[RMDB]
RNA sequence: GGGAACGACUCGAGUAGAGUCGAAAAGAUUUAAACAGAUGGAGAUACACAAAUGUUUGAAUCCCAGUAACAAAAAUUCUGGUAUCUCGGGUAUACAGUAGUGCAGAUACUGUAUUUUUAAUGCUCCUUAGGUUUUCCAUCUUCGGAUGGAAAACAAACGUGAUUAUACGUUCGCGUAUAAUCACGUAAAAGAAACAACAACAACAAC
Reactivity to DMS in 0.01 (KOAc 150mM, MgCl2 10mM, bicine 150mM(pH8.5), 24C), signal-to-noise 1, nucleotides 027 to 156: g000a040u000u000u010a070a010a030c010a000g000a300u000g020g040a180g010a170u000a120c090a190c000a090a090a150u000g030u010u000u000g000a050a060u000c010c010c030a100g020u010a080a300c040a060a080a070a100a240u000u000c060u000g000g000u020a020u010c010u000c020g040g000g010u010a040u020a030c020a000g030u000a030g010u000g040c120a220g020a120u000a020c000u000g000u000a000u000u000u000u000u000a030a140u000g030c020u010c000c010u000u020a230g020g000u000u000u000u030c000c000a010u000c000u000u020c300g040g000a000u030g000g000a010a000a010a000c000a050a060
Reactivity to 2A3 in 0.01 (KOAc 150mM, MgCl2 10mM, bicine 150mM(pH8.5), 24C), signal-to-noise 2, nucleotides 027 to 156: g000a000u000u010u040a000a000a020c000a010g060a050u060g060g010a140g070a180u190a130c090a010c000a080a100a060u040g010u010u010u000g010a010a010u010c000c010c010a020g040u060a030a080c100a110a130a090a040a030u120u040c010u030g020g000u030a060u040c040u030c000g060g000g000u050a020u010a040c010a000g020u030a010g020u060g240c060a030g070a160u000a020c000u010g010u000a020u010u080u020u050u130a090a100u070g020c010u050c050c000u040u080a060g040g020u010u000u000u000c010c000a000u000c000u040u040c160g060g000a000u000g000g000a000a000a000a000c000a000a070